Chemical mapping of a 177-nucleotide RNA with 2A3 and DMS. Reactivities are rounded to 0.1 and cut off at 0 and 3. It was measured as part of the RMDB library OK1LIB. Values cover nucleotides 27 to 126.
RNA sequence: GGGAACGACUCGAGUAGAGUCGAAAACAACGAGAUGGGUCUGGUCAUCUCCGAGGGCAUCAAACCCUUCGCCGUCGAUCAACGCGGUGUGAUCCCGCGCGAUCACAUCAAGGAGGUGCUCGAUUCCAUGCCGAGUACCGUUCGCGGUACUCGGCAUAAAAGAAACAACAACAACAAC
Reactivity to 2A3 in 0.01 (KOAc 150mM, MgCl2 10mM, bicine 150mM(pH8.5), 24C), signal-to-noise 2, nucleotides 027 to 126: c080a030a020c090g090a000g040a170u100g000g000g060u040c060u120g050g050u090c050a000u000c000u000c000c020g040a010g030g000g000c010a120u080c130a090a250a270c050c010c000u050u080c060g060c060c030g050u070c110g040a050u050c030a100a130c000g000c030g030g050u030g010u050g000a020u050c000c010c020g100c040g000c110g050a000u000c000a020c010a010u090c060a080a040g030g000a010g000g000u010g000c000u040c010g030a020u230u090c050c000
Reactivity to DMS in 0.01 (KOAc 150mM, MgCl2 10mM, bicine 150mM(pH8.5), 24C), signal-to-noise 2, nucleotides 027 to 126: c120a050a170c140g010a140g030a000u000g030g000g120u000c040u000g000g030u070c000a000u000c000u000c000c020g030a060g070g010g000c020a050u000c230a000a210a250c120c000c000u000u070c150g020c300c150g140u000c000g010a000u000c130a270a100c080g060c050g000g000u000g060u050g000a210u000c060c000c080g020c300g020c130g000a000u000c000a000c010a160u000c030a030a150g000g010a060g000g000u000g030c100u020c080g000a060u000u060c050c020